[RMDB]
RNA sequence: GGGAACGACUCGAGUAGAGUCGAAAAAACGCGGAGAAGCGCGAGCCGCUGCCGAGCUGGAUGCUGUCGACGUGGCCGUGCAGCUCGAGGUUCGGAUACGCGUCGACCGACACGCUCACGCGAUCGACCAUAAUCAGCAUUUCGAUGCUGAUUAUGGAAAAGAAACAACAACAACAAC
Reactivity to 2A3 in 0.01 (KOAc 150mM, MgCl2 10mM, bicine 150mM(pH8.5), 24C), signal-to-noise 5, nucleotides 027 to 126: a000a000c090g020c040g020g040a150g020a180a020g040c020g010c030g030a040g040c060c010g020c050u060g050c040c030g030a010g000c020u060g100g030a160u130g020c050u030g020u030c010g010a070c070g030u080g070g000c030c000g020u060g000c010a030g040c010u060c060g060a150g000g050u020u000c010g000g030a100u130a200c040g000c000g010u020c010g010a040c010c010g030a030c030a010c080g000c000u010c010a090c030g020c010g030a060u100c050g050a070
Reactivity to DMS in 0.01 (KOAc 150mM, MgCl2 10mM, bicine 150mM(pH8.5), 24C), signal-to-noise 5, nucleotides 027 to 126: a060a080c060g000c030g010g000a130g010a120a080g020c020g020c020g010a180g030c050c020g020c050u000g030c110c040g020a040g010c020u010g020g000a130u010g010c070u000g010u000c010g000a030c060g020u000g000g020c030c010g010u000g000c010a050g010c050u000c100g000a180g020g010u000u000c010g010g010a090u000a060c050g020c020g000u000c020g000a110c090c030g000a090c050a040c110g000c010u010c020a100c050g000c020g000a090u010c080g000a280
Annotation
Source: RMDB library OK2TRN, as collected in RNAgym. Chemical mapping of a 177-nucleotide RNA with 2A3 and DMS. DMS adducts were read by reverse transcription with MarathonRT. For DMS, 8,156 sequencing reads were counted. Reactivities are given for positions 27 through 126.